[RMDB]
RNA sequence: GGGAACGACUCGAGUAGAGUCGAAAACAAAGUGAGACCCUGUCUCAAACACAUCCACUUGCAACGGCUGCUAAUCAGAGCGUCUAAGUGUAUAUUCAGGGCAACUUGAAUCUAUUCUUCCAGUUUGCAUCCCGUGAUGAUUCGUCAUCACGGGAUGAAAAGAAACAACAACAACAAC
Reactivity to 2A3 in 0.01 (KOAc 150mM, MgCl2 10mM, bicine 150mM(pH8.5), 24C), signal-to-noise 9, nucleotides 027 to 126: c050a000a100a010g090u140g050a160g130a300c030c050c070u070g030u010c030u020c020a180a220a020c110a010c010a080u060c040c000a030c040u040u080g030c050a060a050c040g080g000c020u090g000c020u120a060a080u170c030a060g020a010g180c000g010u000c010u060a040a040g010u010g020u020a010u000a010u080u050c010a010g010g010g010c010a010a020c010u000u030g040a040a040u040c040u050a100u140u050c030u080u010c040c010a100g030u020u080u070g050
Reactivity to DMS in 0.01 (KOAc 150mM, MgCl2 10mM, bicine 150mM(pH8.5), 24C), signal-to-noise 3, nucleotides 027 to 126: c120a080a060a070g010u000g020a150g040a140c020c050c040u000g020u010c040u020c160a070a040a140c220a090c090a090u000c080c020a080c050u010u000g020c100a110a120c120g000g020c040u000g000c140u020a060a120u050c140a100g000a040g020c030g000u000c050u000a050a030g000u000g000u000a050u000a020u000u000c000a000g000g000g000c130a090a050c000u000u000g010a060a070u030c110u020a050u000u040c000u020u020c070c050a120g000u000u020u030g000
The data come from the RNA Mapping Database (RMDB), library OK1LIB.
The record gives the reactivity of an RNA of 177 nucleotides to 2A3 and DMS.
DMS adducts were read by reverse transcription with MarathonRT.
The reactions ran in a buffer of 150 mM KOAc, 10 mM MgCl2 and 150 mM bicine (pH 8.5), at 24 C.
For 2A3, 7,998 sequencing reads were counted.